[RMDB]
RNA sequence: GGGAACGACUCGAGUAGAGUCGAAAACUGUGCUCUUUGGGGAACAUGGGUAUGGUCUGUGUACAGAGGGUUAUGGGGUUUCCCGUUCUCUAUGGACAUGUCAUUUAGGCCCUCAGGGACACCAUGAGGACAGUGGCUUAAAGUGCCAUCAGCCUCCAUCUCGGGAAUGUUUCGACAUUCCCGAGAUAAAAGAAACAACAACAACAAC
Reactivity to 2A3 in 0.01 (KOAc 150mM, MgCl2 10mM, bicine 150mM(pH8.5), 24C), signal-to-noise 2, nucleotides 027 to 156: c070u050g020u040g030c060u000c010u020u010u010g000g020g000g020a030a040c050a100u120g070g000g000u060a070u070g040g070u000c010u000g050u020g010u060a060c070a030g020a020g030g000g030u130u080a070u180g020g030g040g070u120u300u300c000c000c010g000u020u010c010u000c000u010a060u160g030g000a000c030a040u040g020u060c020a050u040u120u140a100g070g000c030c010c000u000c020a010g000g000g030a000c000a020c020c000a160u130g000a000g000g000a040c020a010g030u010g010g000c000u040u120a190a130a160g150u230g050c000c000a010u050c040a010g050c000c000u000c060c010